[RMDB]
Structure probing data (2A3) for a 207-nucleotide construct.
RNA sequence: GGGAACGACUCGAGUAGAGUCGAAAAUUGAUCUUCGGAUCAACUCGCGGGGUCGCACCUAUAAUCGAAUCUUUCGCAACAGCCUGAAGCCUCCACGGGACAUGCGAAGAUUCGGUAGGUGCGACGGAGGCACCCUUACCUAGACCUUCGGGUCUAAAGUGUGUUCAGAGUUCGCUCUGAACACACUAAAAGAAACAACAACAACAAC
Reactivity to 2A3 in 0.01 (KOAc 150mM, MgCl2 10mM, bicine 150mM(pH8.5), 24C), signal-to-noise 1, nucleotides 027 to 156: u000u020g020a000u000c000u030u050c280g140g060a000u010c010a060a050c070u070c120g090c070g090g030g020g000u000c000g000c000a010c000c020u040a020u040a020a210u260c040g000a010a000u010c020u060u300u120c030g030c040a040a090c020a250g160c030c000u090g000a040a000g030c000c040u050c020c020a020c010g000g030g070a180c080a240u050g000c010g020a000a000g000a000u000u000c000g030g000u000a000g000g000u000g010c000g000a000c020g000g020a000g030g030c000a030c000c000c000u010u080a070c020c040u040a020g000a000c020c000u040u120c300g140g000g000u000c000u020a040a040

The data come from the RNA Mapping Database (RMDB), library RNAMAK. The 2A3 profile rests on 765 reads.